[RMDB]
The record gives the reactivity of an RNA of 207 nucleotides to 2A3 and DMS.
It was measured as part of the RMDB library OK3TST.
As a SHAPE reagent, 2A3 marks flexible, mostly unpaired nucleotides at the ribose 2'-OH.
The 2A3 profile rests on 2,254 reads.
RNA sequence: GGGAACGACUCGAGUAGAGUCGAAAAUCGUGUUAUCGACCUUUGUAUAAUUUCAGACUCGUGACGAUAAACGUUUUUGGGGAGGCUCUGUUUAGUUUGAGUAGAGGGGCAGAGCGUUACAAUAUAGGGUUGGACGGACCUUGUAUGUUCGAGAUAGUCAUAUAGUGCGGUUCGCCGCACUAUAUGAAAAAGAAACAACAACAACAAC
Reactivity to 2A3 in 0.01 (KOAc 150mM, MgCl2 10mM, bicine 150mM(pH8.5), 24C), signal-to-noise 4, nucleotides 027 to 156: u070c010g010u090g010u100u040a040u040c010g030a100c020c040u050u050u110g110u050a140u060a180a190u130u180u210c090a070g030a120c030u040c080g110u130g070a040c040g010a020u050a080a040a010c010g010u020u010u000u070u090g000g000g000g000a030g050g010c020u030c010u020g020u030u070u080a110g030u050u080u130g060a040g020u070a050g010a040g020g000g010g000c010a000g010a000g030c010g010u020u060a020c040a060a020u050a030u070a220g050g000g030u040u050g050g020a040c070g010g000a020c000c010u020u020g040u030a210u090g030u000u080c040g000a020g020a160u100a030g060
Reactivity to DMS in 0.01 (KOAc 150mM, MgCl2 10mM, bicine 150mM(pH8.5), 24C), signal-to-noise 1, nucleotides 027 to 156: u010c040g050u020g040u000u000a030u000c000g030a180c080c020u000u010u010g030u010a160u000a070a170u000u010u010c080a110g040a070c050u020c020g020u000g040a120c000g020a060u000a080a100a090c020g000u000u000u000u000u000g000g020g000g030a100g020g010c030u000c030u010g040u000u010u010a070g020u000u010u000g020a160g040u000a070g010a120g020g000g000g020c050a050g010a040g020c040g000u000u000a040c110a050a070u020a060u000a040g010g000g000u010u000g000g020a090c110g000g000a000c040c010u010u000g010u000a080u000g020u000u000c060g000a210g000a120u000a090g010